[RMDB]
RNA sequence: GGGAACGACUCGAGUAGAGUCGAAAACGACGGCCGUGACGUGCACCCGCUCGUUCGGGAACUCGGUGUUUGUGUCCACAAGGAAGGACUGAAAGAAGCGACCUUCUACGAAGACGUGCGGAAUCGGAAGGGUGUCAACCCGAUCUUCUCCGUCUCGGUGCAAGUCGAUGUUCGCAUCGACUUGCACAAAAGAAACAACAACAACAAC
Reactivity to 2A3 in 0.01 (KOAc 150mM, MgCl2 10mM, bicine 150mM(pH8.5), 24C), signal-to-noise 1, nucleotides 027 to 156: c020g020a000c000g000g090c060c000g130u140g090a150c090g000u040g070c060a060c000c030c000g000c070u070c060g010u130u050c020g070g000g000a000a000c040u000c000g020g000u160g090u090u130u240g040u020g020u010c000c080a200c080a200a000g110g000a000a030g020g010a060c000u100g030a050a240a190g130a130a070g030c010g060a140c000c000u000u000c040u020a000c010g040a080a050g000a000c040g000u180g000c140g010g000a020a000u000c010g060g070a030a030g050g000g000u040g100u000c000a040a050c020c000c000g060a090u020c130u010u000c020u020c020c000g080u070c000u020c100g080